Record summary:
Structure probing data (2A3) for a 207-nucleotide construct. 2A3 adducts were read by reverse transcription with SuperScript II with manganese. The RNA was probed in 150 mM KOAc, 10 mM MgCl2 and 150 mM bicine (pH 8.5) at 24 C.

[RMDB]
RNA sequence: GGGAACGACUCGAGUAGAGUCGAAAACGCUGGGAGCUCUGGAAUGUACCCGGAAAGUUGACAUGGCAUCUGAAGCGCGCACGGAUGCCAACAGCAACUUUCCCGGUACGAGAGAGAGCUCCUGUGCUGAAGCGCGCACGGCAACCGAAAGGUGCGAGCUGAUGGAAAACUUCGGUUUUCCAUCAGCAAAAGAAACAACAACAACAAC
Reactivity to 2A3 in 0.01 (KOAc 150mM, MgCl2 10mM, bicine 150mM(pH8.5), 24C), signal-to-noise 1, nucleotides 027 to 156: c030g000c000u010g000g020g000a020g000c000u000c010u030g030g260a250a210u300g030u000a010c000c020c000g000g030a010a010a000g020u000u000g070a150c160a300u220g020g000c010a000u000c020u030g050a200a040g030c020g010c000g020c040a000c020g030g000a010u000g000c000c020a020a010c030a000g120c000a000a000c000u010u020u000c010c000c010g010g000u020a000c080g000a000g000a000g010a000g000a000g000c010u010c000c000u000g000u000g000c000u040g000a120a040g030c000g000c000g000c010a000c020g010g050c000a020a060c010c000g040a080a030a020g030g020u000g010c010g010a030
The 2A3 profile rests on 1,834 reads.